[RMDB]
RNA sequence: GGGAACGACUCGAGUAGAGUCGAAAACAAAACUGACCAGCUAUGAGGUCAUACAUCGUCAUAGAAAAACAAAACAAAACUGACCAGCUAUGAGGUCAUACAUCGUCAUAACAAACAAAACAACAAAAGUAUCCGGGUCAUUCGUGACCCGGAUACUAAAAGAAACAACAACAACAAC
Reactivity to 2A3 in 0.01 (KOAc 150mM, MgCl2 10mM, bicine 150mM(pH8.5), 24C), signal-to-noise 1, nucleotides 027 to 126: c040a000a090a000a010c080u070g000a000c000c010a000g000c000u000a000u020g000a000g000g070u010c070a070u180a210c010a060u230c140g080u030c000a000u000a000g020a060a180a010a000a000c040a000a080a000a000c090a090a060a020a090c040u010g000a000c000c000a000g180c060u110a000u060g020a020g000g000u000c000a000u020a000c070a080u050c140g050u000c000a040u100a050a020c050a000a050a000c020a030a030a030a030c070a000a020c070a000a120a000